[RMDB]
The record gives the reactivity of an RNA of 177 nucleotides to DMS and 2A3.
For 2A3 the reverse transcriptase was SuperScript II with manganese.
For 2A3, 6,694 sequencing reads were counted.
The DMS profile rests on 2,845 reads.
DMS (dimethyl sulfate) methylates the pairing face of unpaired adenines and cytosines.
Reactivities are given for positions 27 through 126.
Conditions: 150 mM KOAc, 10 mM MgCl2 and 150 mM bicine (pH 8.5), 24 C.
Source: RMDB library OK1LIB, as collected in RNAgym.
RNA sequence: GGGAACGACUCGAGUAGAGUCGAAAAGAAAGUGUGCACUUGAUACCGCGUGACUUCGGUCACGUAGUGGCAGCGCGCAGGACUUUGCUGCGACUGCUUAGUCCUGAGGUAUCUUGUGCUCACGAAAGGUACGACCUAAUUUCGAUUAGGUCGUACCAAAAGAAACAACAACAACAAC
Reactivity to DMS in 0.01 (KOAc 150mM, MgCl2 10mM, bicine 150mM(pH8.5), 24C), signal-to-noise 1, nucleotides 027 to 126: g000a010a090a150g010u000g010u000g030c010a000c010u000u010g000a000u000a010c000c000g030c020g000u000g010a020c000u000u070c120g010g020u000c000a000c000g000u020a020g020u020g000g010c050a040g000c000g000c020g000c030a000g000g000a140c190u000u040u020g000c070u000g010c030g010a160c060u010g000c000u020u000a050g000u010c040c040u000g050a040g040g030u000a000u000c000u000u010g000u000g020c020u020c050a010c000g010a000a080a060
Reactivity to 2A3 in 0.01 (KOAc 150mM, MgCl2 10mM, bicine 150mM(pH8.5), 24C), signal-to-noise 5, nucleotides 027 to 126: g140a010a070a010g000u010g000u010g000c010a000c010u000u000g000a000u000a000c010c000g000c000g000u000g010a000c000u010u080c230g100g000u010c000a000c020g000u010a010g020u050g100g030c040a010g020c030g000c000g000c070a000g020g040a090c070u170u130u220g030c010u040g020c010g110a160c100u090g000c000u020u090a050g020u070c000c060u070g040a040g020g000u000a000u000c000u000u000g000u000g000c000u000c000a000c000g050a040a010a000
DMS adducts were read by reverse transcription with MarathonRT.